[RMDB]
RNA sequence: GGGAACGACUCGAGUAGAGUCGAAAAAGACCAGGAAGAUGGCCUAUUUAGAGAAGAACAUAAAGGUUAUGUCCAGUACAGGGCCAGAGGUCAACUAUUUCUGAGAAACUUACCUAUACUAGCCACCACCUCAUUGGAGAUUCGUCUCCAAUGAGGUAAAAGAAACAACAACAACAAC
Reactivity to DMS in 0.01 (KOAc 150mM, MgCl2 10mM, bicine 150mM(pH8.5), 24C), signal-to-noise 3, nucleotides 027 to 126: a050g000a080c020c000a100g000g000a080a100g020a140u010g000g010c010c000u000a140u050u010u020a090g000a140g010a120a180g000a070a040c050a080u040a030a070a090g010g000u010u010a000u000g010u010c010c050a080g000u010a100c180a110g010g010g000c050c000a070g000a080g000g000u000c060a080a210c090u000a070u010u000u020c000u000g000a130g000a080a050a060c030u000u020a070c050c020u000a030u010a070c060u000a050g000c050c030a060c070c160
Reactivity to 2A3 in 0.01 (KOAc 150mM, MgCl2 10mM, bicine 150mM(pH8.5), 24C), signal-to-noise 6, nucleotides 027 to 126: a000g120a180c000c000a020g070g020a030a030g090a110u020g000g000c010c000u060a160u100u220u170a120g040a050g060a250a060g050a070a020c010a000u180a140a170a050g140g000u090u060a040u080g080u030c010c010a040g070u170a100c050a130g020g030g000c000c000a010g020a010g000g010u000c000a020a010c040u090a160u070u070u020c050u020g080a100g090a190a060a030c010u030u050a050c010c010u100a100u070a210c070u050a010g030c020c020a090c020c000